[RMDB]
RNA sequence: GGGAACGACUCGAGUAGAGUCGAAAAGGCUCGAUCUUCAGCACCGGCGUGCUGCCGUCCAAGGGGCUGCAGCUCGAAUACGGCGUUCUCGAGUCCGACACCGUGGACGUGGACGAGCAGGAGAACGACGCGUCAUUAUAUUCGUAUAAUGACGCGUAAAAGAAACAACAACAACAAC
Reactivity to 2A3 in 0.01 (KOAc 150mM, MgCl2 10mM, bicine 150mM(pH8.5), 24C), signal-to-noise 7, nucleotides 027 to 126: g040g000c010u000c010g090a220u050c090u190u110c120a030g020c030a020c030c010g040g000c020g010u020g010c000u010g000c000c010g000u000c030c030a300a230g190g030g010g000c000u000g000c010a000g000c000u010c010g030a060a040u190a140c030g010g000c020g030u070u000c010u000c010g010a020g000u000c010c010g030a030c040a070c080c020g030u100g040g010a030c050g010u060g020g020a020c020g000a020g000c030a040g020g080a060g030a080a030c060g030
Reactivity to DMS in 0.01 (KOAc 150mM, MgCl2 10mM, bicine 150mM(pH8.5), 24C), signal-to-noise 9, nucleotides 027 to 126: g010g010c010u000c010g010a110u010c100u010u010c130a080g010c040a100c020c020g010g000c060g020u000g000c020u000g000c050c060g010u000c010c020a170a140g020g030g010g000c020u000g010c030a040g010c010u000c010g000a070a120u010a120c040g010g010c030g010u000u000c030u000c010g010a080g010u000c030c020g000a300c060a090c050c030g010u000g010g000a080c080g010u000g010g000a090c050g000a060g000c030a080g000g000a080g010a090a100c150g000
Notes: This 177-nucleotide RNA was probed chemically with 2A3 and DMS. The data come from the RNA Mapping Database (RMDB), library OK2TRN. The RNA was probed in 150 mM KOAc, 10 mM MgCl2 and 150 mM bicine (pH 8.5) at 24 C. The DMS profile rests on 21,388 reads.